[RMDB]
RNA sequence: GGGAACGACUCGAGUAGAGUCGAAAAGUGCAAAAACACAUUGGCGCUCCAGCAAACUUGCGUGUUGUUGGUCAUGCCAUGCAAGGCACUCUUUUGAAGUUGACUGUCGAUGUUGCUAACCCUAGCAUAAGCCCAUUGUUCGCAAUGGGCAAAAGAAACAACAACAACAAC
Reactivity to DMS in 0.01 (KOAc 150mM, MgCl2 10mM, bicine 150mM(pH8.5), 24C), signal-to-noise 3, nucleotides 027 to 129: g050u000g090c030a030a090a090a000a080c230a180c090a000u030u020g040g000c000g020c100u030c000c030a000g050c000a010a020a020c050u100u080g010c020g020u080g000u080u050g000u000u000g000g000u040c200a000u080g030c040c020a000u030g040c120a060a020g000g000c020a040c060u020c090u030u030u030u020g020a050a090g020u040u030g020a070c010u080g040u000c060g000a060u020g040u000u000g020c080u000a060a110c000c090c100u000a080g030c140a060u030a080a110
Reactivity to 2A3 in 0.01 (KOAc 150mM, MgCl2 10mM, bicine 150mM(pH8.5), 24C), signal-to-noise 5, nucleotides 027 to 129: g010u010g000c020a040a050a000a140a000c040a000c010a080u040u100g000g000c000g000c060u030c020c010a010g000c040a040a070a130c070u240u300g070c100g100u260g020u010u030g000u010u010g010g040u080c050a040u200g000c000c000a000u080g040c030a030a020g040g010c010a010c000u020c110u030u110u020u090g100a130a110g020u100u110g060a060c040u060g010u100c010g040a040u120g040u080u010g000c040u040a110a110c000c020c020u030a050g070c040a080u050a060a060